[RMDB]
RNA sequence: GGGAACGACUCGAGUAGAGUCGAAAAGCAACUCGGUUCGCCGAGUUGCAAAUAAAUUCAGCGGUAAAUUCGAGGCGUAAAUUACCGCUGAACGCCUCGAUAAAAGUCUUCAGUUCGCUGAAGACAAGAUGUUUCCUAUCUUCGGAUAGGAAACAUCAAAAGAAACAACAACAACAAC
Reactivity to DMS in 0.01 (KOAc 150mM, MgCl2 10mM, bicine 150mM(pH8.5), 24C), signal-to-noise 1, nucleotides 027 to 126: g010c000a040a020c000u000c000g000g010u000u040c220g020c000c000g000a010g010u000u000g010c010a000a030a010u010a080a100a110u000u000c010a010g010c000g040g000u000a030a010a110u000u000c010g030a190g000g020c150g020u000a020a010a060u010u000a010c000c010g000c000u000g010a000a010c130g010c030c000u000c190g010a110u010a080a110a120a060g010u000c000u000u000c000a050g010u000u020c190g010c010u000g000a010a000g000a010c040a020a040
Reactivity to 2A3 in 0.01 (KOAc 150mM, MgCl2 10mM, bicine 150mM(pH8.5), 24C), signal-to-noise 2, nucleotides 027 to 126: g010c010a010a000c020u010c000g020g040u060u080c130g010c070c010g000a000g010u000u010g000c000a000a000a000u030a000a000a000u020u030c000a000g000c020g010g000u030a030a020a090u100u060c070g060a130g220g120c070g070u090a000a130a000u020u000a020c000c000g000c000u000g000a010a010c010g000c000c000u050c000g020a010u100a240a190a000a040g010u000c000u000u000c010a010g030u030u060c150g050c100u000g000a010a000g010a000c000a000a020